[RMDB]
RNA sequence: GGGAACGACUCGAGUAGAGUCGAAAAGGGUCCAUUUCCUAUUCCCUAACAGAUGUGGGGUUAUCACCUCUGAUAGCUCUUUGACAUAGUCAUAUAAUGAGGAGUGGAAAUCUGAUUCAUAAUAAUCCGUGGUAAAAGUGUUCGCACUUUUACCACGAAAAGAAACAACAACAACAAC
Reactivity to 2A3 in 0.01 (KOAc 150mM, MgCl2 10mM, bicine 150mM(pH8.5), 24C), signal-to-noise 2, nucleotides 027 to 126: g030g040g020u020c030c010a010u130u090u010c000c000u050a050u000u040c010c000c000u010a130a020c020a050g190a150u090g030u090g040g000g030g010u000u060a010u020c010a040c050c080u150c100u140g020a030u000a010g000c010u000c000u110u130u150g050a020c040a090u160a030g030u080c020a050u060a020u040a230a160u150g040a080g040g000a030g010u020g020g060a030a020a050u040c090u060g050a060u070u020c050a060u100a300a030u060a060a040u100c030
Reactivity to DMS in 0.01 (KOAc 150mM, MgCl2 10mM, bicine 150mM(pH8.5), 24C), signal-to-noise 2, nucleotides 027 to 126: g000g000g000u000c020c300a020u000u020u010c010c010u000a230u010u000c020c010c000u010a090a050c110a080g000a050u010g000u000g000g050g020g010u010u000a010u000c020a060c280c220u020c160u000g020a030u000a030g000c020u000c000u000u000u000g020a070c030a100u000a090g000u000c100a040u010a120u000a110a110u010g000a030g000g000a040g040u010g000g000a010a030a050u000c100u000g000a010u010u000c070a070u020a030a080u000a110a060u010c050